Chemical mapping of a 177-nucleotide RNA with DMS. The RNA was probed in 150 mM KOAc, 10 mM MgCl2 and 150 mM bicine (pH 8.5) at 24 C. The data come from the RNA Mapping Database (RMDB), library OK2TRN.
RNA sequence: GGGAACGACUCGAGUAGAGUCGAAAAUGACUGCUGUAAUCACUGCAGCCUAUUUAACCAUUUGUCACCAGAGAUACCUCCGCACGCAGGCUAUUUCCAAAGGGAUGAAGAGGCUGGAACUUGAGCAAGUCAACACCGUUUUCGAACGGUGUUGACUAAAAGAAACAACAACAACAAC
Reactivity to DMS in 0.01 (KOAc 150mM, MgCl2 10mM, bicine 150mM(pH8.5), 24C), signal-to-noise 1, nucleotides 027 to 126: u010g030a050c040u000g010c000u010g010u000a170a090u010c140a130c030u000g000c040a000g000c000c000u000a070u000u000u000a110a180c070c000a120u000u020u010g000u010c080a130c050c020a100g020a090g000a030u000a060c000c010u000c050c020g020c130a090c180g030c120a060g000g020c200u010a000u000u000u000c020c000a040a050a110g000g010g020a040u000g000a000a000g000a050g000g000c030u000g000g010a120a070c190u010u010g010a100g030c030a050